[RMDB]
RNA sequence: GGGAACGACUCGAGUAGAGUCGAAAAACAGAAGGUUAACCCAGACAUUGUGGAAUUCGCGAAGCAAGUCUUACUAAAUGAAGAGGAGUCUGUGAAACAUGAAGCCAAAAGAGUUAGCGAAGCACGAUAAAACACGACCUUUCGAGGUCGUGUUUUAAAAAGAAACAACAACAACAAC
Reactivity to 2A3 in 0.01 (KOAc 150mM, MgCl2 10mM, bicine 150mM(pH8.5), 24C), signal-to-noise 2, nucleotides 027 to 126: a000c020a070g090a100a000g150g000u030u050a050a070c000c000c000a030g020a010c100a170u090u040g040u000g040g060a090a120u060u080c040g020c010g080a020a000g060c000a000a070g050u000c000u050u110a110c020u100a000a260a300u170g130a050a190g040a020g020g000a000g000u020c020u000g100u120g080a000a140a000c110a090u200g150a050a000g000c060c020a030a000a000a000g090a020g050u120u070a000g010c020g010a010a000g020c030a030c030g020a020
Reactivity to DMS in 0.01 (KOAc 150mM, MgCl2 10mM, bicine 150mM(pH8.5), 24C), signal-to-noise 3, nucleotides 027 to 126: a050c070a150g000a130a070g040g010u010u010a150a110c010c010c000a060g000a150c150a050u040u000g020u000g010g000a130a020u000u020c080g020c000g020a120a100g010c040a040a110g000u030c010u000u020a210c100u010a020a090a120u040g030a100a030g000a090g000g000a030g000u000c030u000g000u030g010a020a140a070c120a000u050g010a010a060g000c000c020a070a000a030a040g000a160g000u000u010a130g010c000g020a030a060g000c040a040c150g030a080